[RMDB]
Notes: Structure probing data (2A3 and DMS) for a 207-nucleotide construct. For 2A3, 2,457 sequencing reads were counted. 2A3 adducts were read by reverse transcription with SuperScript II with manganese. The reactions ran in a buffer of 150 mM KOAc, 10 mM MgCl2 and 150 mM bicine (pH 8.5), at 24 C. DMS adducts were read by reverse transcription with MarathonRT.
RNA sequence: GGGAACGACUCGAGUAGAGUCGAAAAAGACAUACCAUUACGAUGGUAUGGCAAGUCCGUGACGGCGAUGGAUCCCGCCUGGCCGAUGCCGAACUGCCGAUCUGGCUGAUGGUUCCUGCCCCGUCAAAAAACGUAAAGCACUUCGGUGCUUUACGAAUCUAAUUAGGGGGUUCGCCCCCUAAUUAGAAAAAGAAACAACAACAACAAC
Reactivity to 2A3 in 0.01 (KOAc 150mM, MgCl2 10mM, bicine 150mM(pH8.5), 24C), signal-to-noise 3, nucleotides 027 to 156: a000g030a000c000a000u000a000c000c000a010u040u080a060c260g090a020u010g000g000u000a010u000g000g010c010a060a050g080u010c010c030g030u030g010a010c020g000g000c090g030a030u070g000g010a010u040c010c010c010g000c010c040u030g010g000c030c040g040a050u130g060c040c050g120a130a100c080u100g020c040c000g060a100u060c080u090g020g010c020u030g030a110u110g020g000u010u010c000c010u040g010c010c010c010c000g030u040c020a030a020a060a070a030a040c010g000u010a000a000a000g000c000a010c020u040u110c230g080g010u000g010c030u000u000u000a000c000g000a010a020
Reactivity to DMS in 0.01 (KOAc 150mM, MgCl2 10mM, bicine 150mM(pH8.5), 24C), signal-to-noise 3, nucleotides 027 to 156: a060g000a040c010a010u000a000c000c000a030u000u000a080c250g000a150u000g000g000u000a000u020g000g010c030a070a150g030u010c030c040g010u000g040a080c000g000g000c030g030a160u000g010g020a050u000c050c000c040g010c030c020u000g020g010c020c020g010a090u000g020c090c040g000a090a130c090u000g000c020c020g020a080u010c050u000g040g010c020u030g010a160u000g000g010u000u000c010c010u010g000c060c070c020c020g010u000c010a000a040a100a060a070a190c010g030u000a000a010a010g010c010a000c010u000u000c300g080g010u000g010c010u010u000u000a010c000g010a060a040